[RMDB]
RNA sequence: GGGAACGACUCGAGUAGAGUCGAAAAGUUCAGUCGUUCGCGACUGAACAAACUGUGAAGCGCGAAAACACAGAAAACAAACGGCAACGCGCGUAUCCCCGAAAACCCUGCAGUUCGCUGCAGGGAACCUCCAGAGAAAGUUCGCUUUCUCUGGAGGAAAAGAAACAACAACAACAAC
Reactivity to DMS in 0.01 (KOAc 150mM, MgCl2 10mM, bicine 150mM(pH8.5), 24C), signal-to-noise 2, nucleotides 027 to 126: g020u030u000c000a000g000u000c000g000u000u010c190g000c010g000a020c000u000g010a010a010c000a050a070a130c000u000g000u010g010a070a150g000c010g010c000g000a130a050a070a180c000a010c000a020g000a120a070a110a130c110a060a100a070c150g000g000c160a030a240c050g000c010g000c040g020u000a090u010c000c000c030c190g000a090a060a140a150c000c000c000u000g020c010a000g010u000u000c230g020c020u010g000c000a010g020g000g000a000a000
Reactivity to 2A3 in 0.01 (KOAc 150mM, MgCl2 10mM, bicine 150mM(pH8.5), 24C), signal-to-noise 1, nucleotides 027 to 126: g000u000u010c000a020g020u000c020g030u050u020c210g010c020g060a020c000u000g010a000a000c000a030a000a000c020u040g040u040g100a110a040g000c010g000c000g090a060a070a080a000c010a000c000a030g140a060a120a030a040c050a030a100a040c060g140g020c030a050a040c000g010c000g000c000g020u060a260u150c020c000c000c000g080a010a000a080a140c000c000c000u000g000c000a020g000u070u070c120g020c180u010g010c010a000g000g000g000a000a000
Background:
An RNA of 177 nucleotides, treated with DMS and 2A3 and read out base by base. For DMS, 1,132 sequencing reads were counted. Values cover nucleotides 27 to 126. 2A3 adducts were read by reverse transcription with SuperScript II with manganese. DMS adducts were read by reverse transcription with MarathonRT. The reactions ran in a buffer of 150 mM KOAc, 10 mM MgCl2 and 150 mM bicine (pH 8.5), at 24 C. It was measured as part of the RMDB library M2PK50. DMS (dimethyl sulfate) methylates the pairing face of unpaired adenines and cytosines.